[RMDB]
An RNA of 177 nucleotides, treated with 2A3 and read out base by base.
For 2A3, 366 sequencing reads were counted.
Conditions: 150 mM KOAc, 10 mM MgCl2 and 150 mM bicine (pH 8.5), 24 C.
Reactivities are given for positions 27 through 126.
For 2A3 the reverse transcriptase was SuperScript II with manganese.
The data come from the RNA Mapping Database (RMDB), library RFM100.
RNA sequence: GGGAACGACUCGAGUAGAGUCGAAAAGAGUAGCAUAAGCUCUCCUUUGACAUCUUCACCAACCUCUCAUCGUUCCCUUCUCUGUAAUAACGUCGUUUUGCAAAACUGCAAUGGUCCUGAGCCGAUACUCUUCAUCGACCUUCGGGUCGAUGAAGAGAAAAGAAACAACAACAACAAC
Reactivity to 2A3 in 0.01 (KOAc 150mM, MgCl2 10mM, bicine 150mM(pH8.5), 24C), signal-to-noise 1, nucleotides 027 to 126: g020a000g040u130a010g000c110a260u070a300a000g030c000u120c000u000c000c000u000u000u000g050a020c020a260u040c070u080u040c070a150c150c060a090a040c050c050u030c000u000c060a070u000c000g000u000u000c000c030c000u000u000c000u000c000u000g050u000a050a050u040a180a180c050g100u040c050g020u020u000u080u010g090c050a060a080a230a190c030u030g040c070a000a110u070g120g000u000c010c010u000g000a000g100c050c040g020a010u060a050